[RMDB]
RNA sequence: GGGAACGACUCGAGUAGAGUCGAAAAAGAGGGUCUAGCUUUGAAUCUCAAGAACUAAGCAGCCAUGGGAUAGCUUCAACAGAGAGAGACUUACUUCUUGGGGAUAUCCUGCUCCCCCAUAGCUUAGUCAUUCAUGACUGUUCGCAGUCAUGAAUGAAAAAGAAACAACAACAACAAC
Reactivity to DMS in 0.01 (KOAc 150mM, MgCl2 10mM, bicine 150mM(pH8.5), 24C), signal-to-noise 3, nucleotides 027 to 126: a100g020a100g010g010g010u010c050u000a060g040c040u000u000u000g020a110a100u010c040u010c110a040a100g010a100a120c030u000a040a050g020c050a110g010c060c290a120u000g010g000g020a060u000a030g000c070u010u000c040a040a090c220a110g000a060g010a070g000a110g000a090c140u010u010a080c030u000u000c060u000u000g030g010g000g010a070u000a070u000c000c000u000g000c150u010c010c000c000c030c170a120u020a070g000c020u000u020a040g010
Reactivity to 2A3 in 0.01 (KOAc 150mM, MgCl2 10mM, bicine 150mM(pH8.5), 24C), signal-to-noise 2, nucleotides 027 to 126: a010g070a050g040g000g060u070c070u050a040g030c030u150u040u150g050a150a150u040c030u000c080a060a040g050a060a050c030u050a060a000g000c030a010g000c000c050a060u180g000g000g000a010u030a050g040c000u050u040c050a110a140c070a030g030a000g000a010g000a010g050a210c010u110u110a060c040u060u120c000u010u050g000g000g000g000a030u020a060u070c000c000u010g010c010u010c000c000c000c000c030a100u080a060g000c000u010u020a020g040